[RMDB]
RNA sequence: GGGAACGACUCGAGUAGAGUCGAAAAGCUGAAAAUGAUUUAUGGGUAGUGGAAUAGGUCAACCGUAAGACCUUUGGUUGAAAAACUAUGAAAUUAAGCCUCAGAUAUUUUAUCUUUGGUUACGGGAAAAAUCAUUUACCGUUCGCGGUAAAUGAAAGGAUUACUUACUCUUCGGAGUAAGUAAUCCAAAAGAAACAACAACAACAAC
Reactivity to 2A3 in 0.01 (KOAc 150mM, MgCl2 10mM, bicine 150mM(pH8.5), 24C), signal-to-noise 2, nucleotides 027 to 156: g010c030u030g040a010a020a110a050u130g020a080u160u180u300a090u130g010g020g040u050a030g010u020g070g080a190a140u080a100g000g010u020c010a050a040c050c000g000u010a010a010g030a040c000c020u000u000u020g030g010u000u020g020a080a020a020a020a000c020u040a070u120g040a050a060a050u100u070a170a020g000c000c010u000c000a000g010a010u030a100u120u300u230u100a010u090c060u020u010u040g000g000u010u030a010c010g010g040g060a030a130a030a000a020u060c000a000u010u000u000a000c000c000g020u020u050c300g000c020g110g000u000a000a010a000u000g000a000a000a010

Conditions: 150 mM KOAc, 10 mM MgCl2 and 150 mM bicine (pH 8.5), 24 C. An RNA of 207 nucleotides, treated with 2A3 and read out base by base.